Conditions: 150 mM KOAc, 10 mM MgCl2 and 150 mM bicine (pH 8.5), 24 C. The record gives the reactivity of an RNA of 177 nucleotides to DMS and 2A3.

RNA sequence: GGGAACGACUCGAGUAGAGUCGAAAAUUAAAAGGGAACGACUCGAGUAGAGUCGAAAAGACGCUCAACUCAUGGAGCGCAAGACGAUUAGCUACAUAUUCGACAUGAGGGCGCCGUUCGCAAAAAAACAUACUCUUGGAUUCGUCCAAGAGUAUGUAAAAGAAACAACAACAACAAC
Reactivity to DMS in 0.01 (KOAc 150mM, MgCl2 10mM, bicine 150mM(pH8.5), 24C), signal-to-noise 2, nucleotides 027 to 126: u000u010a000a020a210a130g000g000g010a020a050c000g000a010c010u010c000g000a040g010u000a040g000a010g000u000c000g000a010a000a060a180g020a130c020g020c020u010c010a080a140c110u000c060a120u000g000g010a040g010c070g010c010a110a060g030a030c060g020a070u020u010a070g040c110u000a050c080a160u000a100u010u000c020g010a130c030a020u000g010a010g000g030g010c210g040c050c010g000u000u000c010g020c070a000a000a070a070a050a020
Reactivity to 2A3 in 0.01 (KOAc 150mM, MgCl2 10mM, bicine 150mM(pH8.5), 24C), signal-to-noise 2, nucleotides 027 to 126: u020u050a010a060a030a000g000g000g000a010a000c000g000a000c000u000c000g000a000g010u010a000g010a000g000u010c000g000a000a000a000a000g020a030c010g010c000u010c030a020a070c000u000c050a040u030g040g010a010g010c030g010c010a010a030g060a010c030g020a040u040u080a050g080c030u060a020c020a070u190a230u100u100c010g020a040c030a030u040g020a020g030g010g000c020g000c020c010g000u010u000c120g020c090a000a070a040a010a000a010